[RMDB]
RNA sequence: GGGAACGACUCGAGUAGAGUCGAAAAUCUUUAGUAUAUGGGUGUCUACAACUUAAAGAUCCAGUAGUGGAAUUAGCAGGGUCAUUUCAUUCCUUUAUUACACAAGAGAUUAUAGAUAUCCUAAUUGCGAGAAUCACUGAUUCGUCAGUGAUUCUCGAAAAGAAACAACAACAACAAC
Reactivity to DMS in 0.01 (KOAc 150mM, MgCl2 10mM, bicine 150mM(pH8.5), 24C), signal-to-noise 1, nucleotides 027 to 126: u000c060u000u020u060a120g000u020a080u000a080u010g000g000g080u020g030u000c000u000a040c230a100a020c080u030u000a040a030a110g000a060u000c000c000a010g030u000a050g010u000g000g000a030a030u000u010a010g000c060a030g020g000g040u030c150a020u000u010u020c030a120u020u000c000c000u030u000u020a100u040u010a150c030a050c160a060a020g000a020g000a130u010u030a100u000a000g000a090u040a000u000c000c000u000a040a070u060u040g000
Reactivity to 2A3 in 0.01 (KOAc 150mM, MgCl2 10mM, bicine 150mM(pH8.5), 24C), signal-to-noise 4, nucleotides 027 to 126: u020c020u020u100u050a040g030u060a070u030a080u170g000g020g010u010g010u000c010u050a030c040a150a070c060u060u240a160a100a070g060a020u020c010c020a040g040u060a030g060u080g040g030a040a040u110u050a100g090c080a080g020g080g070u070c060a080u040u060u200c000a020u070u070c000c000u070u130u060a080u140u110a050c070a010c000a140a010g030a000g000a050u090u030a050u050a170g030a020u020a000u010c000c000u050a110a170u080u120g030
Annotation
An RNA of 177 nucleotides, treated with DMS and 2A3 and read out base by base.